Overview: The record gives the reactivity of an RNA of 177 nucleotides to DMS. It was measured as part of the RMDB library OK2TRN. DMS adducts were read by reverse transcription with MarathonRT.
[RMDB]
RNA sequence: GGGAACGACUCGAGUAGAGUCGAAAACAGCCCAGUGACUAUUUCUCGGAAUUGUUGCCCUACAUCAGCACUCCGCGUAGUUACGAUAAUGGUUCGUUGCAGGGUGUUGCUAUGCGAUAUGGCUGGACUCCCGUCUGAGAUUCGUCUCAGACGGGAGAAAAGAAACAACAACAACAAC
Reactivity to DMS in 0.01 (KOAc 150mM, MgCl2 10mM, bicine 150mM(pH8.5), 24C), signal-to-noise 1, nucleotides 027 to 126: c080a110g010c020c000c130a170g030u010g000a100c040u000a070u000u000u000c010u000c120g000g030a080a070u000u000g000u000u000g020c030c050c040u000a070c100a070u000c020a040g000c020a030c030u000c040c020g010c070g020u010a090g000u010u010a010c010g000a050u020a060a140u040g070g000u000u000c080g040u000u000g030c010a050g000g010g040u010g020u000u000g040c190u000a040u040g000c130g000a110u010a100u000g010g020c010u000g000g000a300